[RMDB]
RNA sequence: GGGAACGACUCGAGUAGAGUCGAAAACGAAAAGGACGCUGGAAGACUUCAAGAGUGGAACUUCCACCAUCGACGAUCAGGUUCGAUGGAUUCUUCAAAAAUCGCGCAAAAAACUUUCGAGCUUGAAUAAAUCCACGGUAUUCGUACCGUGGAUUUAAAAAGAAACAACAACAACAAC
Reactivity to DMS in 0.01 (KOAc 150mM, MgCl2 10mM, bicine 150mM(pH8.5), 24C), signal-to-noise 1, nucleotides 027 to 126: c050g000a040a010a150a110g000g010a070c030g050c090u000g000g010a060a010g000a210c130u000u000c030a080a170g020a090g020u020g040g030a020a080c110u000u000c000c000a140c030c000a010u000c000g000a030c060g020a100u000c280a170g040g000u020u000c000g000a000u000g000g010a050u000u000c000u000u000c160a000a250a000a070a060u020c130g030c040g000c060a000a020a080a120a120a220c070u000u000u000c030g000a080g010c100u010u000g000a070a120